[RMDB]
RNA sequence: GGGAACGACUCGAGUAGAGUCGAAAAGAUAUGGACUCUCCGAUAAGCGUGCCGUCGGAAACGACGGACACGCUUUUGACGGAGGGUCCUAAGUCAAAAGAGCUAGUCACUUCGGUGACUAGCUCAACACGCAACGUAUGUUCGCAUACGUUGCGUGAAAAGAAACAACAACAACAAC
Reactivity to DMS in 0.01 (KOAc 150mM, MgCl2 10mM, bicine 150mM(pH8.5), 24C), signal-to-noise 1, nucleotides 027 to 126: g010a010u000a300u000g000g000a000c000u000c000u000c000c020g020a040u010a050a040g040c000g060u000g010c000c000g000u010c010g080g000a030a050a160c000g010a020c000g000g000a080c010a000c000g000c000u000u000u000u010g010a250c080g010g000a030g040g000g000u000c000c000u000a000a110g020u000c030a090a090a080a060g000a000g010c000u010a000g010u000c000a000c000u000u020c080g040g000u000g000a000c020u000a000g050c000u000c010a000a050